[RMDB]
RNA sequence: GGGAACGACUCGAGUAGAGUCGAAAAGAUAUGGAGAGAGGACGGACAUAUGCGAAGAACUCUGACCACAUAUCGGAAACGAUAUGUGGUCAGAGGGAGCAUAUGAGAACCGUCCCUCUCCUAAGUCCACUUUAAUAAACUUCGGUUUAUUAAAGUGAAAAGAAACAACAACAACAAC
Reactivity to DMS in 0.01 (KOAc 150mM, MgCl2 10mM, bicine 150mM(pH8.5), 24C), signal-to-noise 5, nucleotides 027 to 126: g010a070u010a300u010g010g010a020g000a010g000a190g030g000a020c000g010g020a290c010a010u000a000u010g010c010g000a100a200g020a150a240c010u000c000u000g000a010c000c000a010c010a020u000a000u000c010g000g010a130a100a260c010g020a010u000a000u000g020u000g010g000u000c000a010g010a000g010g010g000a070g020c000a000u010a000u000g000a140g010a120a100c010c010g000u000c000c000c000u000c010u000c000c000u010a000a060g010u000c040
Reactivity to 2A3 in 0.01 (KOAc 150mM, MgCl2 10mM, bicine 150mM(pH8.5), 24C), signal-to-noise 3, nucleotides 027 to 126: g040a030u110a060u210g020g000a000g010a020g110a200g040g000a000c010g010g020a020c010a020u020a010u020g030c010g300a300a030g010a060a040c000u020c020u020g000a000c010c000a000c010a000u010a010u010c010g020g020a090a060a010c020g010a000u000a000u020g010u000g000g010u000c000a010g000a000g000g000g000a000g030c000a000u010a010u010g030a060g060a030a010c000c000g000u020c000c000c000u030c000u010c010c000u000a010a000g000u000c010